[RMDB]
RNA sequence: GGGAACGACUCGAGUAGAGUCGAAAAGUGACACUGUUCGCAGUGUCACAAAGUGGUGGAUCUAGAACCACAAUAACUAGAUCAAUGAUCUAGUCUAGAUCAAAAGCAUACAGUUCGCUGUAUGCAACAGCGUCUUUUACUUCGGUAAAAGACGCUGAAAAGAAACAACAACAACAAC
Reactivity to DMS in 0.01 (KOAc 150mM, MgCl2 10mM, bicine 150mM(pH8.5), 24C), signal-to-noise 1, nucleotides 027 to 126: g000u000g010a020c000a010c020u000g020u000u010c280g020c000a020g030u000g020u020c000a000c000a040a090a050g010u000g000g000u020g020g010a000u000c000u010a000g020a070a010c010c000a020c000a170a070u000a050a090c000u000a000g010a000u000c010a220a170u000g000a010u000c000u000a020g000u000c000u000a010g000a000u000c020a070a090a060a240g020c050a000u000a000c040a020g000u000u000c240g030c090u020g010u010a000u020g020c020a120a040
Reactivity to 2A3 in 0.01 (KOAc 150mM, MgCl2 10mM, bicine 150mM(pH8.5), 24C), signal-to-noise 2, nucleotides 027 to 126: g000u010g000a000c000a020c010u020g000u070u090c160g030c120a000g010u000g020u010c000a000c000a000a030a000g040u020g000g000u010g010g020a000u000c010u010a010g000a010a010c010c010a010c070a040a090u170a030a020c010u010a010g010a010u010c080a130a300u300g020a000u000c010u010a010g010u000c000u000a020g000a000u010c030a020a080a030a030g010c000a010u000a000c000a000g010u030u130c200g080c080u010g000u000a000u000g000c000a020a000